[RMDB]
RNA sequence: GGGAACGACUCGAGUAGAGUCGAAAAUCGGACGGCGGCCAUGAGUCGCAACGCAAAGCCGCGGCAAGUGGAGUUAGCGAGAAGAGACUAGGCUUUGGUUUCUUCAAGUGAAGCGGUCACCAAUCAGCAAAGGAUCGUCUUUCGAGACGAUCCUUUGAAAAGAAACAACAACAACAAC
Reactivity to 2A3 in 0.01 (KOAc 150mM, MgCl2 10mM, bicine 150mM(pH8.5), 24C), signal-to-noise 2, nucleotides 027 to 126: u170c020g060g030a000c030g080g010c000g050g010c000c000a020u040g000a000g010u020c000g000c030a050a050c070g020c180a150a150a010g090c080c000g040c020g010g000c010a080a000g000u010g000g040a100g040u100u100a060g020c040g010a030g000a020a010g000a000g000a000c020u060a000g090g250c050u160u220u120g040g000u000u030u000c000u040u000c090a030a000g000u030g040a030a010g000c030g090g020u000c000a050c030c020a000a050u150c010a030g000
Reactivity to DMS in 0.01 (KOAc 150mM, MgCl2 10mM, bicine 150mM(pH8.5), 24C), signal-to-noise 3, nucleotides 027 to 126: u020c110g000g010a040c090g010g010c000g040g030c000c000a030u020g000a300g000u000c010g000c000a020a020c150g060c110a070a060a130g000c100c060g030c000g030g010c050a010a280g020u000g000g000a140g000u000u020a240g000c000g000a290g000a040a000g020a090g000a030c000u000a020g020g000c120u010u000u040g000g020u000u000u000c000u000u000c030a020a300g010u050g000a060a050g020c020g010g030u000c000a160c050c080a080a080u040c190a200g000
This 177-nucleotide RNA was probed chemically with 2A3 and DMS. 2A3 adducts were read by reverse transcription with SuperScript II with manganese. It was measured as part of the RMDB libraries RFM100 and RFMREP. The reactions ran in a buffer of 150 mM KOAc, 10 mM MgCl2 and 150 mM bicine (pH 8.5), at 24 C. For 2A3, 1,176 sequencing reads were counted.